Conditions: 150 mM KOAc, 10 mM MgCl2 and 150 mM bicine (pH 8.5), 24 C. This 177-nucleotide RNA was probed chemically with DMS and 2A3. 2A3 adducts were read by reverse transcription with SuperScript II with manganese. It was measured as part of the RMDB library OK1LIB. Reactivities are given for positions 27 through 126. The 2A3 profile rests on 3,120 reads.
[RMDB]
RNA sequence: GGGAACGACUCGAGUAGAGUCGAAAACAGUGAUGGAAACAUCACUGAAAAACCGGAAACGGACAUGACGAUCGCGCCCAUGUCGGGAAACCGUAAACGCGAAAAGAGCUAGCGAAAGCUAGCUCAAGGUCCACCUAAAUUUCGAUUUAGGUGGACCAAAAGAAACAACAACAACAAC
Reactivity to DMS in 0.01 (KOAc 150mM, MgCl2 10mM, bicine 150mM(pH8.5), 24C), signal-to-noise 1, nucleotides 027 to 126: c010a000g000u000g040a000u000g000g000a120a110a250c000a080u020c000a030c000u010g000a010a020a110a100a070c040c000g020g000a070a060a120c090g020g000a110c100a000u020g020a090c170g000a130u000c030g020c020g000c110c020c030a020u010g000u000c070g000g080g040a080a070a050c280c030g000u050a050a080a250c100g000c000g010a070a110a170a050g000a000g050c010u000a010g040c020g000a090a050a160g100c000u000a000g010c000u000c000a010a090
Reactivity to 2A3 in 0.01 (KOAc 150mM, MgCl2 10mM, bicine 150mM(pH8.5), 24C), signal-to-noise 3, nucleotides 027 to 126: c000a000g000u000g000a000u000g020g040a020a020a010c000a000u000c000a000c000u000g010a020a020a000a000a000c020c000g080g030a160a110a010c030g060g000a030c010a030u020g020a030c030g080a090u040c030g010c010g030c060c010c000a030u090g040u060c080g020g050g030a080a040a020c000c010g010u100a030a140a100c030g020c020g030a030a050a020a050g000a000g000c010u000a000g000c030g080a180a060a000g000c000u000a000g000c010u000c000a000a000